RNA sequence: GGGAACGACUCGAGUAGAGUCGAAAAGAUAUGGAAGCCUUUGAUCUAAGGAGCCUUUGAUCUCGGAAACGAGGGAGGCUACUUAGGGAGGCUUCCUAAGUCAAAGUGCAACGUUCGCGUUGCACAACACUCAUAUAAACUUCGGUUUAUAUGAGUGAAAAGAAACAACAACAACAAC
Reactivity to DMS in 0.01 (KOAc 150mM, MgCl2 10mM, bicine 150mM(pH8.5), 24C), signal-to-noise 6, nucleotides 027 to 126: g000a050u010a300u000g000g000a020a010g000c000c000u000u000u010g010a060u020c010u000a010a000g000g000a020g010c000c000u000u010u010g000a070u000c000u000c000g000g000a140a100a180c000g010a030g000g010g010a010g020g010c000u000a010c000u000u000a010g000g000g010a010g010g010c010u000u000c000c000u000a010a060g010u000c040a090a120a170g000u000g000c000a010a010c000g020u000u010c240g010c020g020u010u000g010c000a000c010a060a140
Reactivity to 2A3 in 0.01 (KOAc 150mM, MgCl2 10mM, bicine 150mM(pH8.5), 24C), signal-to-noise 5, nucleotides 027 to 126: g010a020u080a050u200g010g000a010a000g010c010c010u280u280u130g080a070u050c000u010a000a000g000g010a020g010c010c020u240u270u090g100a110u070c000u010c010g010g020a110a080a070c010g010a010g000g020g020a010g000g000c000u000a000c000u000u000a000g010g000g010a000g000g000c000u000u000c000c000u000a020a000g020u010c050a110a080a090g000u000g000c000a010a000c000g030u040u070c300g030c000g130u000u010g000c000a000c000a000a000

An RNA of 177 nucleotides, treated with DMS and 2A3 and read out base by base. For 2A3, 16,452 sequencing reads were counted. For 2A3 the reverse transcriptase was SuperScript II with manganese.